[RMDB]
Chemical mapping of a 177-nucleotide RNA with DMS and 2A3. The RNA was probed in 150 mM KOAc, 10 mM MgCl2 and 150 mM bicine (pH 8.5) at 24 C. DMS adducts were read by reverse transcription with MarathonRT.
RNA sequence: GGGAACGACUCGAGUAGAGUCGAAAAUCAUUGGCUUCGCUGCGCGCUGCGUUGCCUAGGCUACAGAUGCUUCGUACUGUUGCCAACGUUGCAAUUUCCAAACGCUAAUGCGAAAGUGUGCAAACAACUUAUUACAUCACUUCGGUGAUGUAAUAAGAAAAGAAACAACAACAACAAC
Reactivity to DMS in 0.01 (KOAc 150mM, MgCl2 10mM, bicine 150mM(pH8.5), 24C), signal-to-noise 9, nucleotides 027 to 126: u010c080a120u010u000g010g010c020u000u000c030g010c020u010g020c080g010c070g020c030u010g010c070g020u000u000g000c020c010u000a130g000g010c010u000a040c030a020g010a140u000g020c130u000u020c140g010u010a100c030u010g010u000u010g010c000c010a070a110c200g000u010u000g010c080a060a130u000u000u000c020c040a070a120a160c060g000c030u000a070a110u010g010c030g000a070a060a060g020u000g010u010g010c050a140a090a080c220a060a140
Reactivity to 2A3 in 0.01 (KOAc 150mM, MgCl2 10mM, bicine 150mM(pH8.5), 24C), signal-to-noise 9, nucleotides 027 to 126: u100c020a030u030u130g030g000c010u010u010c010g020c060u120g000c020g000c000g000c020u020g000c000g010u010u010g000c000c000u020a070g010g010c010u040a000c010a010g050a190u120g080c080u110u190c080g070u100a080c010u010g010u030u020g000c010c010a030a030c070g050u050u090g030c030a060a080u010u050u000c020c000a060a050a030c020g010c050u160a210a040u210g010c020g060a060a010a020g030u040g010u020g010c000a040a040a060c030a030a020